[RMDB]
RNA sequence: GGGAACGACUCGAGUAGAGUCGAAAAGAUAUGGAUAAGAGCUUGGAUUUAAGGUCCCUCGGAAACGAGGGAGCCUUUGUCAGCUCAAAUCCUAAGUCAAACCUCAGCGUGUUCGCACGCUGAGGAAGGAAGUAUAUACCUUCGGGUAUAUACUUCCAAAAGAAACAACAACAACAAC
Reactivity to 2A3 in 0.01 (KOAc 150mM, MgCl2 10mM, bicine 150mM(pH8.5), 24C), signal-to-noise 5, nucleotides 027 to 126: g020a010u060a020u100g000g000a000u020a020a130g000a020g020c080u200u290g180g030a270u300u280u210a020a010g010g000u030c000c000c000u000c000g000g020a040a020a010c010g000a000g000g000g020a010g010c000c000u010u020u050g060u010c000a000g000c000u000c000a010a010a010u000c000c000u010a060a010g040u000c030a070a090a200c000c000u000c000a000g000c010g010u030g080u100u180c230g040c160a000c020g000c000u000g010a000g000g000a000a010
Reactivity to DMS in 0.01 (KOAc 150mM, MgCl2 10mM, bicine 150mM(pH8.5), 24C), signal-to-noise 4, nucleotides 027 to 126: g000a020u000a300u010g000g000a010u000a030a300g000a010g010c000u000u010g020g010a040u000u010u000a000a010g010g020u000c000c000c000u000c000g010g010a070a070a150c000g010a020g010g010g000a010g030c000c000u000u010u000g000u000c010a030g000c010u000c000a010a240a040u000c000c000u000a050a200g010u010c040a100a110a130c000c000u000c010a000g000c000g030u000g010u000u020c230g010c020a020c010g010c000u000g000a000g000g000a020a020

The record gives the reactivity of an RNA of 177 nucleotides to 2A3 and DMS.
2A3 adducts were read by reverse transcription with SuperScript II with manganese.
The reactions ran in a buffer of 150 mM KOAc, 10 mM MgCl2 and 150 mM bicine (pH 8.5), at 24 C.
For 2A3, 11,446 sequencing reads were counted.